[RMDB]
RNA sequence: GGGAACGACUCGAGUAGAGUCGAAAAGUUAAAACUAAAUCGAAGUAAAUGCUAACGACGAAAAGUUUGCAUUGGCCGCCUAACAGCCGCCUUGGGUUGUAACUGACCUCGAAACAGAAAAGUUACUCGUAUAUUCUGGUUUCGACCAGAAUAUACGAAAAGAAACAACAACAACAAC
Reactivity to 2A3 in 0.01 (KOAc 150mM, MgCl2 10mM, bicine 150mM(pH8.5), 24C), signal-to-noise 6, nucleotides 027 to 126: g050u060u080a070a040a040a040c050u100a120a110a110u140c110g070a090a010g080u100a070a090a040u040g020c040u050a030a010c010g140a020c100g100a090a090a030a040g010u020u020u040g000c020a020u010u030g010g000c010c030g010c010c010u070a100a050c040a020g010c010c020g000c010c000u010u010g010g000g000u020u030g010u020a010a000c010u010g090a030c000c010u010c160g020a050a030a010c020a020g030a010a010a000a000g000u010u000a010c010u000
Reactivity to DMS in 0.01 (KOAc 150mM, MgCl2 10mM, bicine 150mM(pH8.5), 24C), signal-to-noise 2, nucleotides 027 to 126: g010u000u000a040a070a050a080c050u000a050a090a050u000c060g000a050a140g050u000a170a070a060u010g000c090u020a070a050c030g020a300c090g000a140a140a110a090g000u030u000u000g000c020a060u000u000g000g000c010c170g000c000c030u010a140a020c290a130g000c010c170g000c030c020u020u020g000g000g010u000u010g010u000a000a000c000u010g000a030c050c050u000c170g030a020a170a090c060a030g000a020a020a050a100g010u000u000a010c030u000

Structure probing data (2A3 and DMS) for a 177-nucleotide construct. For DMS the reverse transcriptase was MarathonRT. The reactions ran in a buffer of 150 mM KOAc, 10 mM MgCl2 and 150 mM bicine (pH 8.5), at 24 C. It was measured as part of the RMDB libraries RFM100 and RFMREP. 2A3 adducts were read by reverse transcription with SuperScript II with manganese.